[RMDB]
RNA sequence: GGGAACGACUCGAGUAGAGUCGAAAAGCAACUCGGUUCGCCGAGUUGCAAAUAAAAUCAGCGGUAAAUUCGAGGCGUAAAUUAGCGCUGAACGCCUCGAUAAAAGUCUUCAGUUCGCUGAAGACAACGCAUUAGGAAAGUUCGCUUUCCUAAUGCGAAAAGAAACAACAACAACAAC
Reactivity to DMS in 0.01 (KOAc 150mM, MgCl2 10mM, bicine 150mM(pH8.5), 24C), signal-to-noise 1, nucleotides 027 to 126: g040c000a000a020c000u000c000g020g050u000u000c180g010c020c000g000a020g010u000u000g000c010a000a010a040u010a100a060a080a110u010c070a020g000c000g040g010u000a040a120a110u000u000c000g010a020g000g020c000g030u000a030a060a130u000u000a070g050c100g000c080u000g000a090a030c010g000c010c010u000c000g000a030u000a050a050a050a130g000u010c000u000u000c000a000g020u010u010c190g010c020u000g000a000a020g000a030c000a080a080
Reactivity to 2A3 in 0.01 (KOAc 150mM, MgCl2 10mM, bicine 150mM(pH8.5), 24C), signal-to-noise 2, nucleotides 027 to 126: g000c010a000a000c000u000c000g010g070u100u130c260g080c080c000g000a020g000u010u000g010c000a010a000a000u020a000a000a000a020u080c040a020g040c040g130g100u080a080a110a180u110u010c020g010a000g000g000c000g000u010a000a080a160u090u150a070g040c010g020c090u040g040a000a020c000g000c010c000u000c000g000a000u000a000a050a000a020g000u000c000u000u020c010a020g020u020u070c140g040c040u000g000a000a000g000a010c000a010a020